[RMDB]
RNA sequence: GGGAACGACUCGAGUAGAGUCGAAAAUGGCGAUGUCUCGGCACCCGCAAUUAUUUAAAUGUCCCAGAGACAGAGAUUUGUAAAUUGCACGGCUACAAAGUGCAUAUUGUAUGGUGCCAUUAAAUGGCGUGGAUAAUCAGUUCGCUGAUUAUCCACGAAAAGAAACAACAACAACAAC
Reactivity to 2A3 in 0.01 (KOAc 150mM, MgCl2 10mM, bicine 150mM(pH8.5), 24C), signal-to-noise 7, nucleotides 027 to 126: u130g080g010c050g070a040u070g050u030c030u020c050g000g000c010a000c010c000c000g010c000a000a020u100u050a070u060u230u100a110a130a070u090g030u000c010c030c050a030g010a020g010a020c020a010g070a010g000a040u070u190u220g100u180a040a060a100u010u010g000c010a010c030g060g000c050u240a090c160a100a190a000g010u000g000c010a000u040a010u030u020g030u010a080u210g000g000u000g000c000c000a010u110u170a060a110a110u210g070g020
Reactivity to DMS in 0.01 (KOAc 150mM, MgCl2 10mM, bicine 150mM(pH8.5), 24C), signal-to-noise 5, nucleotides 027 to 126: u020g010g010c090g030a060u010g000u010c030u010c070g010g000c020a040c030c020c180g020c030a030a020u010u010a080u030u010u020a060a100a100u010g000u010c010c010c090a140g000a110g000a060c040a030g000a160g000a090u020u010u020g000u010a030a080a060u010u000g000c000a010c010g010g030c140u030a140c250a080a100a130g000u000g000c010a030u010a020u000u010g000u000a090u040g000g020u000g000c010c000a080u020u020a060a040a100u020g000g000